[RMDB]
RNA sequence: GGGAACGACUCGAGUAGAGUCGAAAAUAUCUAAUGUUUCAUCAUCUAAAGAUACUGGAACAUGUAAUAAUGAAGAUGAUGGUUGAAUGACAAGCUCAUUAGUGUGUGCUAACAAUUUGUCGAUUAAGAGCUAGCAGUUAUUCGUAACUGCUAGCUCAAAAGAAACAACAACAACAAC
Reactivity to DMS in 0.01 (KOAc 150mM, MgCl2 10mM, bicine 150mM(pH8.5), 24C), signal-to-noise 2, nucleotides 027 to 126: u030a020u010c000u000a110a010u000g000u000u070u020c030a030u040c070a010u000c010u000a000a160a150g000a090u050a000c040u020g000g040a300a180c190a080u060g030u050a020a020u040a300a020u040g010a290a170g000a000u000g020a050u000g000g000u050u000g040a070a000u010g000a060c000a090a030g000c120u000c000a230u000u010a000g060u000g040u000g010u010g000c050u000a000a000c210a070a250u000u000u000g000u000c000g000a190u020u030a080a220
Reactivity to 2A3 in 0.01 (KOAc 150mM, MgCl2 10mM, bicine 150mM(pH8.5), 24C), signal-to-noise 2, nucleotides 027 to 126: u220a000u070c080u200a100a050u120g080u110u080u170c000a000u000c000a000u000c000u160a120a000a000g260a020u000a040c030u080g150g010a070a120c000a050u080g020u000a020a030u080a070a000u120g170a020a010g000a030u060g000a000u000g160g000u000u080g170a030a110u180g120a000c050a030a000g000c010u030c110a070u000u170a110g000u010g000u050g180u120g300c000u150a070a030c000a090a070u000u050u060g070u020c000g000a020u000u250a240a090

Record summary: Structure probing data (DMS and 2A3) for a 177-nucleotide construct. For 2A3, 490 sequencing reads were counted. The DMS profile rests on 1,709 reads. It was measured as part of the RMDB library OK1LIB.